An RNA of 177 nucleotides, treated with 2A3 and read out base by base. For 2A3, 388 sequencing reads were counted. The data come from the RNA Mapping Database (RMDB), library RFM100. The RNA was probed in 150 mM KOAc, 10 mM MgCl2 and 150 mM bicine (pH 8.5) at 24 C. Values cover nucleotides 27 to 126.

[RMDB]
RNA sequence: GGGAACGACUCGAGUAGAGUCGAAAAAACACCCUCGUGGUGGUUGGGUACAUUAGGAGGACUGCCAGUGCCAAACUGGAGGAAGGAACGGGCAACGGUAGGUCAGUAUGCCCCGAAUGUGCUGGGCGGUGGUGAGGACUUUCGAGUCCUCACCACCAAAAGAAACAACAACAACAAC
Reactivity to 2A3 in 0.01 (KOAc 150mM, MgCl2 10mM, bicine 150mM(pH8.5), 24C), signal-to-noise 1, nucleotides 027 to 126: a000a000c150a000c000c000c000u090c090g130u090g030g050u140g000g110u000u010g000g000g000u040a000c000a010u000u010a130g020g000a000g000g140a040c030u000g020c000c000a100g020u040g060c010c000a140a000a000c070u040g080g010a130g040g040a020a020g000g000a060a060c300g100g000g000c000a000a000c000g150g000u150a090g130g090u040c000a000g000u050a140u250g040c090c000c000c000g020a050a040u190g030u000g160c090u040g020g130g000c000